[RMDB]
Conditions: 150 mM KOAc, 10 mM MgCl2 and 150 mM bicine (pH 8.5), 24 C. Chemical mapping of a 207-nucleotide RNA with DMS and 2A3. 2A3 adducts were read by reverse transcription with SuperScript II with manganese. It was measured as part of the RMDB library RNAMAK.
RNA sequence: GGGAACGACUCGAGUAGAGUCGAAAAGCGUACUACACUAGGGAAAGUGGCUCAUCGAUCUGUGGGAUAAAUCGCUUCCCAAAUAGGAAGCGGAAUACCACAGGGAGAGCCAUAACACUAGUGUAUCGCAAAACGAUCAGGAUUCGUCCUGAUCGAACGUACACACUACGUUCGCGUAGUGUGUACGAAAAGAAACAACAACAACAAC
Reactivity to DMS in 0.01 (KOAc 150mM, MgCl2 10mM, bicine 150mM(pH8.5), 24C), signal-to-noise 1, nucleotides 027 to 156: g000c010g030u010a090c020u000a030c020a030c000u010a000g020g000g010a050a210a300g000u010g020g000c030u010c000a280u010c210g020a100u020c010u000g000u000g020g000g020a110u000a060a070a170u000c030g000c000u030u010c000c010c050a030a100a260u000a010g010g020a040a020g000c000g000g000a060a070u000a020c010c010a050c010a030g000g000g020a040g000a000g010c000c000a020u000a020a300c010a060c020u000a030g000u000g000u000a000u000c030g080c040a050a020a040a140c030g020a020u000c000a020g000g000a010u000u000c300g030u000c000c000u000g020a000u000c000g010a020a100
Reactivity to 2A3 in 0.01 (KOAc 150mM, MgCl2 10mM, bicine 150mM(pH8.5), 24C), signal-to-noise 4, nucleotides 027 to 156: g020c020g030u100a070c100u000a000c030a000c010u000a000g030g020g050a040a100a280g020u010g000g020c010u000c020a300u300c070g010a040u010c000u000g010u010g000g020g040a060u120a170a170a020u120c010g000c000u000u040c010c020c000a110a200a050u290a040g000g000a000a000g000c000g020g000a010a040u080a080c000c000a000c010a000g000g000g000a030g020a000g000c010c000a010u040a030a040c050a010c000u020a020g000u010g010u010a020u040c000g000c000a040a050a000a110c010g000a000u000c010a000g000g010a010u020u100c150g050u030c080c000u000g000a010u000c000g000a000a000